[RMDB]
RNA sequence: GGGAACGACUCGAGUAGAGUCGAAAAACAUAUUUGGCCUCCACUUCAGGACCAUGCUGACUGAACCAUGAUGAACAUGAACAGUGUCCUUGCAUGAUCUCUGGUGGAACAGGGAGUAAGGUUCAGAUAAAUAGUGCACCUUCGGGUGCACUAUUUAAAAAGAAACAACAACAACAAC
Reactivity to DMS in 0.01 (KOAc 150mM, MgCl2 10mM, bicine 150mM(pH8.5), 24C), signal-to-noise 1, nucleotides 027 to 126: a060c130a130u000a080u000u000u010g000g000c100c000u000c020c010a010c020u000u000c070a040g020g000a010c040c010a020u010g010c020u010g000a070c010u000g000a140a100c190c020a020u000g020a190u030g010a110a240c010a020u010g000a060a230c090a050g000u000g000u020c100c280u010u020g040c020a020u000g000a050u010c020u030c020u000g000g010u000g000g000a010a050c190a050g020g020g000a010g010u000a030a080g000g010u000u000c050a030g010a220
Annotation: An RNA of 177 nucleotides, treated with DMS and read out base by base. The data come from the RNA Mapping Database (RMDB), library OK2TST. The reactions ran in a buffer of 150 mM KOAc, 10 mM MgCl2 and 150 mM bicine (pH 8.5), at 24 C. DMS adducts were read by reverse transcription with MarathonRT.